[RMDB]
RNA sequence: GGGAACGACUCGAGUAGAGUCGAAAAACAAGUGGUGGUAGUCCGCCACUCUAAGGGGACGCGUUUAGAAGAAGAGGCUAGGGGGUAUUCCGGUGUGGGAUACUUAGUAAUAUGCAACGCUAAUUGCUCAAGGAUAGAUGAUUCGUCAUCUAUCCAAGAUAGACUGAAUGUUCGCAUUCAGUCUAUCAAAAGAAACAACAACAACAAC
Reactivity to 2A3 in 0.01 (KOAc 150mM, MgCl2 10mM, bicine 150mM(pH8.5), 24C), signal-to-noise 5, nucleotides 027 to 156: a000c090a070a020g010u020g010g000u010g020g040u060a070g080u050c020c010g000c010c000a020c010u000c010u020a090a080g010g020g010g000a020c050g020c020g030u050u090u130a060g010a110a000g010a020a020g030a010g030g000c070u080a050g030g020g010g010g000u010a020u030u040c030c040g190g010u150g040u150g100g030g000a020u030a030c000u030u030a010g030u060a020a110u080a070u280g030c020a030a020c040g040c100u110a120a090u070u090g000c020u020c130a090a100g000g000a000u000a000g000a000u010g010a010u060u060c180g050u000c070a000u000c000u000a000u000c000c000a000a000
Reactivity to DMS in 0.01 (KOAc 150mM, MgCl2 10mM, bicine 150mM(pH8.5), 24C), signal-to-noise 1, nucleotides 027 to 156: a050c040a090a000g020u020g000g080u000g020g020u000a100g030u010c000c030g060c010c010a020c000u000c020u000a090a090g000g000g000g040a110c070g000c070g000u000u000u010a110g020a150a150g000a110a120g000a130g030g000c060u000a130g020g040g020g000g030u000a030u000u000c030c000g020g060u020g040u000g030g000g010a040u000a010c020u000u010a080g030u000a120a160u000a080u000g000c030a050a060c040g040c030u000a060a110u000u010g000c000u010c040a080a140g030g020a020u000a010g030a000u000g030a040u000u010c300g000u010c010a010u010c000u000a000u000c000c010a020a050